[RMDB]
RNA sequence: GGGAACGACUCGAGUAGAGUCGAAAAGAUAUGGAAUUGUCUGCAGCAACAGCUUCCUCGGAAACGAGGAAGACAUGCUGUCAGAAAGACUGAUUCCUAAGUCAAACGCACUCGUUCGCGAGUGCGAGUAUGAGCUAAAGUUCGCUUUAGCUCAUACAAAAGAAACAACAACAACAAC
Reactivity to 2A3 in 0.01 (KOAc 150mM, MgCl2 10mM, bicine 150mM(pH8.5), 24C), signal-to-noise 7, nucleotides 027 to 126: g020a020u110a050u230g010g050a020a040u070u070g040u060c010u020g000c010a010g010c000a020a110c010a110g030c010u000u000c000c000u000c020g030g010a080a080a040c010g000a000g000g010a000a000g000a000c000a020u060g000c000u010g050u080c020a010g220a050a070a020g090a030c150u200g030a040u010u020c000c000u030a140a030g080u040c070a130a030a030c020g000c000a000c020u000c000g060u130u070c300g020c010g200a000g000u000g000c010g000a000
Reactivity to DMS in 0.01 (KOAc 150mM, MgCl2 10mM, bicine 150mM(pH8.5), 24C), signal-to-noise 8, nucleotides 027 to 126: g010a050u010a300u010g000g000a020a030u000u020g020u010c000u000g000c020a030g010c000a040a080c300a190g000c000u000u000c000c000u010c000g000g000a120a090a220c000g030a030g010g000a000a000g000a020c110a160u010g010c010u000g010u010c160a060g010a100a120a070g010a080c060u010g020a040u000u000c000c000u010a090a150g010u000c050a110a130a300c020g000c000a010c000u000c000g020u000u020c260g020c010g000a010g000u000g000c000g010a040